[RMDB]
RNA sequence: GGGAACGACUCGAGUAGAGUCGAAAACUGUCUUACCAAGCUACGCGUUGAUAAGACCGUAGUGGCCCGGUUAAUGACCAGGGGUAUGGUAACAACGGAAAGAGAUGUCACAAUGGGUGAUCCGCAGCCAAACACCCGACUUCGGAAGAAGAGGGUGCAUAGACACGGUCUUCGGACCGUGUCUAUGAAAAGAAACAACAACAACAAC
Reactivity to 2A3 in 0.01 (KOAc 150mM, MgCl2 10mM, bicine 150mM(pH8.5), 24C), signal-to-noise 4, nucleotides 027 to 156: c030u040g010u040c030u010u020a030c010c020a090a020g010c010u010a000c010g100c080g040u010u040g070a270u090a250a060g010a010c000c010g000u010a000g010u060g090g000c020c010c000g000g030u060u060a150a040u160g140a030c050c070a150g000g010g000g030u090a120u170g030g000u030a030a020c020a030a020c020g050g010a060a080a000g080a020g010a010u120g050u090c030a020c010a140a190u130g080g090g010u020g000a050u030c050c020g030c040a000g010c040c000a030a080a030c000a000c000c030c020g210a300c050u020u010c000g090g120a150a060g000a000a000g000a100g000g000g010u020g000
Reactivity to DMS in 0.01 (KOAc 150mM, MgCl2 10mM, bicine 150mM(pH8.5), 24C), signal-to-noise 2, nucleotides 027 to 156: c020u000g050u010c040u000u010a000c000c000a020a240g000c020u010a050c030g010c070g050u010u000g000a160u010a080a140g000a020c000c000g000u020a050g060u020g020g030c000c010c020g020g050u010u000a070a090u000g000a060c000c000a130g030g040g000g000u000a010u010g020g020u000a040a090c030a070a110c000g030g000a010a040a100g000a090g000a080u000g020u000c040a060c050a160a150u000g000g020g000u030g020a140u000c010c030g030c040a150g010c040c070a020a070a210c030a020c030c000c000g000a080c030u000u000c000g010g020a160a190g010a040a040g010a300g010g020g010u000g030